[RMDB]
RNA sequence: GGGAACGACUCGAGUAGAGUCGAAAAGAUAUGGAUGUCGCUCCCCACCCUAUUCGUCCGACGAAGUUAAUCGUCUCGGAAACGAGACGAUUAACAGAGGAUUCGUAGGAGGCGACAUCCUAAGUCACCAAGCAGAUCUGUUCGCAGAUCUGCUUGGAAAAGAAACAACAACAACAAC
Reactivity to DMS in 0.01 (KOAc 150mM, MgCl2 10mM, bicine 150mM(pH8.5), 24C), signal-to-noise 1, nucleotides 027 to 126: g000a090u000a110u030g010g010a000u030g000u000c000g030c010u030c070c030c170c140a300c030c000c000u000a000u000u000c300g000u030c010c010g000a280c300g020a110a070g000u000u000a000a000u000c020g010u020c000u000c000g000g000a080a020a150c000g000a060g020a000c000g000a000u010u000a000a010c000a020g000a070g030g020a020u000u000c220g000u000a000g020g000a050g000g040c000g020a010c030a030u000c030c000u020a020a070g010u020c120a230